Notes
This 207-nucleotide RNA was probed chemically with 2A3 and DMS. For 2A3 the reverse transcriptase was SuperScript II with manganese. Conditions: 150 mM KOAc, 10 mM MgCl2 and 150 mM bicine (pH 8.5), 24 C. Source: RMDB library RNAMAK, as collected in RNAgym.
[RMDB]
RNA sequence: GGGAACGACUCGAGUAGAGUCGAAAAAGUAUUUCGAUACUAAACAUUCCUAAGUCUCCACGUUUGACGGAUGUUGUCAGAUCGCACUCGGAAACGAGUGAUGAUCUUGGAUUUACAUCCCGAGUGGAGAUAUGGAGAUUGCUGCUUUCGAGCAGAAACCCAGUUCUCUUUUCGAAGAGAACUGGGUAAAAGAAACAACAACAACAAC
Reactivity to 2A3 in 0.01 (KOAc 150mM, MgCl2 10mM, bicine 150mM(pH8.5), 24C), signal-to-noise 2, nucleotides 027 to 156: a000g040u040a020u020u230u130c120g060a040u040a010c030u100a130a080a150c060a150u040u040c010c000u010a090a090g000u020c000u000c000c000a020c040g040u120u130u270g050a040c030g010g000a000u000g010u000u040g030u000c000a000g010a020u010c000g010c010a010c000u000c000g080g060a140a120a080c000g010a020g000u000g070a190u080g000a000u000c000u000u090g030g000a000u000u000u290a000c000a000u010c000c000c000g010a020g030u000g000g000a000g000a000u000a000u010g060g000a060g050a050u110u280g050c000u020g000c000u080u090u210c230g100a040g000c010a030g020a120a050
Reactivity to DMS in 0.01 (KOAc 150mM, MgCl2 10mM, bicine 150mM(pH8.5), 24C), signal-to-noise 1, nucleotides 027 to 156: a080g030u000a070u010u040u020c130g010a100u000a150c010u000a120a170a120c150a100u000u010c000c000u000a200a300g000u000c010u000c000c000a050c020g000u020u020u000g030a300c120g030g030a010u020g000u000u000g000u000c020a080g000a010u000c000g000c020a000c000u000c000g010g000a260a130a200c000g000a000g010u000g000a040u000g020a000u000c000u020u020g030g060a020u000u000u000a000c000a000u000c010c000c020g010a120g030u000g020g030a030g000a010u000a020u020g000g000a140g010a130u000u020g010c000u000g020c040u020u000u000c040g000a140g000c080a120g000a040a120